[RMDB]
RNA sequence: GGGAACGACUCGAGUAGAGUCGAAAACUGGGUACUAGAGUAUGUGAAGGCUGUCUCGGUCUCUAGUAUCUAACUCAUGCACUACUUGUAGACUAGACUGAGAUAGCCUUUAGUCAUAAGUGGUGUAGGAACUCUAAGUAUUCGUACUUGGAGUUCCAAAAGAAACAACAACAACAAC
Reactivity to DMS in 0.01 (KOAc 150mM, MgCl2 10mM, bicine 150mM(pH8.5), 24C), signal-to-noise 6, nucleotides 027 to 126: c080u010g000g000g000u010a020c030u000a030g000a050g010u010a020u000g000u000g000a020a010g000g000c000u000g010u000c010u000c000g010g010u010c050u010c090u010a010g010u000a060u020c040u000a040a090c090u010c090a090u020g010c090a080c110u010a040c090u010u010g010u010a050g010a050c040u000a040g000a030c010u020g000a010g000a000u000a000g000c000c010u000u000u000a030g000u020c010a050u010a020a030g010u000g010g010u000g000u010a160
Reactivity to 2A3 in 0.01 (KOAc 150mM, MgCl2 10mM, bicine 150mM(pH8.5), 24C), signal-to-noise 3, nucleotides 027 to 126: c020u020g010g010g010u010a010c000u000a010g010a010g040u070a020u070g070u030g000a020a010g010g020c030u010g010u000c000u010c000g090g030u010c010u000c000u010a000g000u010a030u000c000u000a050a000c010u020c050a070u110g020c020a020c060u080a010c010u050u060g030u040a030g010a010c000u000a010g010a020c030u030g010a010g000a010u020a000g000c000c000u000u000u000a000g000u000c000a000u000a040a010g050u010g000g010u020g010u020a040